Annotation
Structure probing data (2A3 and DMS) for a 177-nucleotide construct.
RNA sequence: GGGAACGACUCGAGUAGAGUCGAAAAGAAAGAAAGAAAGAUGGUUGGAAGAACAGUCCCAGAUGAUUCGUACAAAGUCCGACCAUAGGAGGUUUUGUAUGUAUUAUCUGGAAUUGUGCACAACCAACUGAUUCCAUGUCUUCGGACAUGGAAUCAGAAAAGAAACAACAACAACAAC
Reactivity to 2A3 in 0.01 (KOAc 150mM, MgCl2 10mM, bicine 150mM(pH8.5), 24C), signal-to-noise 3, nucleotides 027 to 126: g100a010a040a000g110a040a090a020g130a080a040a040g130a020u080g010g050u000u000g030g050a090a070g020a060a000c000a000g030u010c010c000c010a000g010a000u020g000a000u010u010c000g000u010a000c000a020a030a010g040u050c020c010g040a220c080c130a070u150a060g030g010a040g000g000u000u000u000u000g010u000a010u010g000u000a000u000u020a000u000c000u000g010g010a000a000u030u000g000u040g000c020a010c000a300a010c020c000a000a010
Reactivity to DMS in 0.01 (KOAc 150mM, MgCl2 10mM, bicine 150mM(pH8.5), 24C), signal-to-noise 1, nucleotides 027 to 126: g070a140a060a070g000a180a090a090g000a110a060a160g000a150u000g050g010u030u000g000g000a120a070g050a020a050c000a020g000u000c000c000c000a000g000a000u000g000a030u000u040c000g060u000a000c000a000a030a010g000u010c010c010g000a170c100c300a030u000a080g000g000a300g010g010u000u000u000u000g000u000a000u000g000u020a000u000u010a030u010c000u000g000g060a000a010u000u000g000u000g000c090a140c000a040a060c000c000a000a050
It was measured as part of the RMDB library RFM100. Conditions: 150 mM KOAc, 10 mM MgCl2 and 150 mM bicine (pH 8.5), 24 C.